[RMDB]
Source information:
Structure probing data (DMS and 2A3) for a 207-nucleotide construct. For DMS, 26,197 sequencing reads were counted. For 2A3 the reverse transcriptase was SuperScript II with manganese. The 2A3 profile rests on 4,419 reads. For DMS the reverse transcriptase was MarathonRT.
RNA sequence: GGGAACGACUCGAGUAGAGUCGAAAAUAACGUGCGCGUUUAAGUUUGGGGUUAGUUUUAGAUUUAGGUUUACAUUUAUAUGCUCGGUUGAAGGUGAAUUUUAGCUUAAACUUAAGUAUGGCGUGUAAUGUGGGUUCUUAUUUAAAUGGAAGGUGGGCUAGUUUAUAACAUUCGUGUUAUGAAUUAGAAAAGAAACAACAACAACAAC
Reactivity to DMS in 0.01 (KOAc 150mM, MgCl2 10mM, bicine 150mM(pH8.5), 24C), signal-to-noise 5, nucleotides 027 to 156: u000a070a090c060g030u000g020c050g030c050g010u000u000u000a060a110g000u000u000u000g020g010g000g010u000u000a060g010u000u000u010u000a070g000a110u000u000u000a070g010g020u000u000u000a050c050a080u000u010u010a110u000a090u030g020c020u000c030g010g010u000u000g000a060a100g020g030u010g010a050a080u000u000u000u000a080g010c030u000u000a060a040a070c020u000u000a030a080g020u000a100u000g010g030c090g020u000g010u000a030a070u000g020u000g010g020g020u000u000c000u000u000a110u010u000u000a040a060a090u000g010g000a060a050g010g030u000g010g010g010
Reactivity to 2A3 in 0.01 (KOAc 150mM, MgCl2 10mM, bicine 150mM(pH8.5), 24C), signal-to-noise 2, nucleotides 027 to 156: u040a010a010c020g010u020g000c070g000c000g020u010u030u050a040a010g010u010u030u050g000g000g000g000u010u020a030g000u000u020u010u060a030g000a030u020u010u040a020g000g000u010u030u020a010c000a010u030u080u020a110u040a010u060g010c000u000c020g020g000u010u020g040a020a000g000g010u010g010a010a010u050u040u030u070a010g000c000u010u050a030a010a050c000u020u020a010a000g020u020a040u040g040g000c010g000u030g030u030a040a030u020g010u010g010g000g000u030u010c000u000u000a060u030u060u050a040a050a000u010g000g010a000a010g020g010u020g010g000g000